[RMDB]
RNA sequence: GGGAACGACUCGAGUAGAGUCGAAAAGUCGACUGGACGUUGAUACAGCGAACGUAGUGCGUUUCGGUAGGCGAUACGUUGGGUCUCAUCCGGGUGGUUCCAGUACUCCGCCAAGCCAUCGAUAUCACCGGACUCACAAAGGUCGCGUAUCUGUGGCGACGCUAUUUGCAUUCGUGCAAAUAGCGUCAAAAGAAACAACAACAACAAC
Reactivity to DMS in 0.01 (KOAc 150mM, MgCl2 10mM, bicine 150mM(pH8.5), 24C), signal-to-noise 1, nucleotides 027 to 156: g060u010c020g000a200c050u000g000g000a070c120g030u000u010g010a150u020a020c080a090g050c000g020a000a010c070g030u000a210g000u000g010c110g050u020u000u020c080g010g020u010a130g000g000c040g010a080u000a040c030g050u010u010g050g000g020u020c050u000c100a080u010c110c070g070g040g000u010g030g020u000u010c110c080a220g010u000a100c010u000c070c020g040c000c040a140a150g000c000c020a020u000c090g020a160u060a030u000c050a080c020c010g000g010a080c040u010c030a090c090a070a040a220g010g000u000c030g100c020g020u000a010u000c000u030g000u000g000g010c140
Reactivity to 2A3 in 0.01 (KOAc 150mM, MgCl2 10mM, bicine 150mM(pH8.5), 24C), signal-to-noise 4, nucleotides 027 to 156: g080u050c020g070a160c110u110g050g020a010c040g070u090u120g010a020u010a020c050a140g000c000g010a010a030c030g010u070a030g010u050g010c040g020u020u030u270c040g020g030u110a100g080g190c070g030a010u010a040c020g000u020u030g100g020g060u070c100u020c150a130u050c100c080g060g020g020u040g000g050u070u100c040c000a010g010u080a040c070u020c040c000g010c030c010a060a060g000c010c000a010u020c020g110a170u010a010u040c000a000c000c010g020g010a020c010u010c020a000c000a000a200a000g010g000u000c000g000c000g030u010a010u000c020u040g050u050g090g040c080
Overview:
An RNA of 207 nucleotides, treated with DMS and 2A3 and read out base by base. Values cover nucleotides 27 to 156. For DMS the reverse transcriptase was MarathonRT. Conditions: 150 mM KOAc, 10 mM MgCl2 and 150 mM bicine (pH 8.5), 24 C.